[RMDB]
RNA sequence: GGGAACGACUCGAGUAGAGUCGAAAAGUCGCCGCGUCUACAUCAACGCCCAGCGCGGGCGAGGGAAGCGUCCUACGGGGGUGGCCCAUUCGCCGGCAUGGCAGAGGACGGCAAGAUUGCCGCGACGCAGCGUCAGUCAUUUCGAUGACUGACGCUGAAAAGAAACAACAACAACAAC
Reactivity to DMS in 0.01 (KOAc 150mM, MgCl2 10mM, bicine 150mM(pH8.5), 24C), signal-to-noise 2, nucleotides 027 to 126: g030u020c010g040c000c250g020c000g010u000c000u000a170c140a110u010c050a090a240c070g040c050c010c050a180g020c120g000c060g010g000g020c010g020a050g010g010g000a080a070g000c030g030u010c000c010u010a090c160g030g020g020g010g010u010g000g000c020c020c020a090u000u010c030g030c010c010g000g020c030a130u000g010g010c030a100g000a250g000g000a100c010g010g020c100a070a060g000a060u010u010g020c010c120g010c070g000a030c060g000
Reactivity to 2A3 in 0.01 (KOAc 150mM, MgCl2 10mM, bicine 150mM(pH8.5), 24C), signal-to-noise 2, nucleotides 027 to 126: g010u010c010g000c020c010g000c020g000u020c020u060a050c040a120u100c020a090a030c050g010c000c000c000a080g060c300g070c130g240g040g010c020g010a010g020g040g020a020a030g070c020g030u020c010c000u050a140c120g120g010g000g050g080u020g060g030c020c000c000a130u040u080c000g010c000c000g070g060c080a070u030g010g000c040a010g020a050g100g000a040c010g050g050c020a000a010g070a090u190u300g000c000c030g000c010g020a000c010g000